This 177-nucleotide RNA was probed chemically with DMS and 2A3.
RNA sequence: GGGAACGACUCGAGUAGAGUCGAAAACGGCUGACGGCAUCCUGACCCCGCAGUACGUGGGCGACACCAUCCGCCUGAUCGAAGCGCCGAACGUGCUCGGCUCGAUCUUCAGCACCGGCGUGCUGCCGUGAUCACUCUUAUUCGUAAGAGUGAUCACAAAAGAAACAACAACAACAAC
Reactivity to DMS in 0.01 (KOAc 150mM, MgCl2 10mM, bicine 150mM(pH8.5), 24C), signal-to-noise 8, nucleotides 027 to 126: c090g000g010c040u000g000a110c080g010g010c050a070u000c030c030u000g000a150c080c020c010c060g030c040a050g010u010a050c060g020u010g000g010g020c020g000a090c090a090c110c070a070u010c070c050g000c050c040u000g000a040u000c030g010a080a140g010c190g000c020c010g020a040a130c160g010u000g020c080u010c010g010g010c030u000c020g000a040u000c010u000u000c070a070g000c040a070c060c060g000g000c050g010u000g010c020u000g010c170c190
Reactivity to 2A3 in 0.01 (KOAc 150mM, MgCl2 10mM, bicine 150mM(pH8.5), 24C), signal-to-noise 7, nucleotides 027 to 126: c020g030g000c030u060g050a040c030g040g030c010a060u050c010c020u050g100a100c000c000c000c030g000c010a020g040u060a040c020g000u070g000g020g010c020g020a020c020a040c070c020a040u070c030c020g000c010c020u030g010a020u020c020g020a070a020g150c030g000c110c010g010a040a020c070g170u170g050c040u000c010g010g000c000u010c010g020a040u000c000u060u060c040a040g000c040a040c050c040g110g000c040g000u020g000c010u030g010c010c040
Overview:
DMS adducts were read by reverse transcription with MarathonRT. The data come from the RNA Mapping Database (RMDB), library OK2TST.